Chemical mapping of a 177-nucleotide RNA with DMS and 2A3.
The RNA was probed in 150 mM KOAc, 10 mM MgCl2 and 150 mM bicine (pH 8.5) at 24 C.
For 2A3 the reverse transcriptase was SuperScript II with manganese.
For DMS, 1,002 sequencing reads were counted.
Source: RMDB library OK2TRN, as collected in RNAgym.
The 2A3 profile rests on 1,191 reads.
RNA sequence: GGGAACGACUCGAGUAGAGUCGAAAACAGCGGUGACGCGACCCUGCUGCAGCGCUAUGACACCCUCAGCAAGCAUCUGACCGUCUAUGCAGGCGACCUGGCGAAGCCGCAGCUGGGCCUGAGCCAGGCAAUCGCGACAAUUCGUUGUCGCGAUUGCAAAAGAAACAACAACAACAAC
Reactivity to DMS in 0.01 (KOAc 150mM, MgCl2 10mM, bicine 150mM(pH8.5), 24C), signal-to-noise 2, nucleotides 027 to 126: c150a070g000c020g020g000u000g010a140c060g060c000g000a110c080c020c010u000g000c010u000g000c150a120g020c080g000c090u010a100u000g000a040c090a060c040c040c030u010c030a040g010c100a140a090g000c070a060u000c020u020g000a110c110c060g030u010c020u010a120u000g000c070a100g010g020c120g000a110c030c000u000g000g000c000g010a160a300g020c020c010g060c070a140g010c070u010g010g000g040c000c030u000g000a300g000c000c040a010g000
Reactivity to 2A3 in 0.01 (KOAc 150mM, MgCl2 10mM, bicine 150mM(pH8.5), 24C), signal-to-noise 1, nucleotides 027 to 126: c030a010g060c030g000g110u130g050a050c070g000c040g110a120c010c010c010u020g030c010u020g030c020a050g110c020g000c000u000a090u170g030a040c030a030c050c020c020u050c020a030g000c080a080a220g010c020a040u160c050u100g040a070c020c010g000u000c000u030a040u150g060c030a030g000g000c020g030a080c000c000u010g020g010c000g020a060a020g040c010c020g040c040a000g080c040u060g020g000g020c000c070u080g020a000g020c000c000a030g030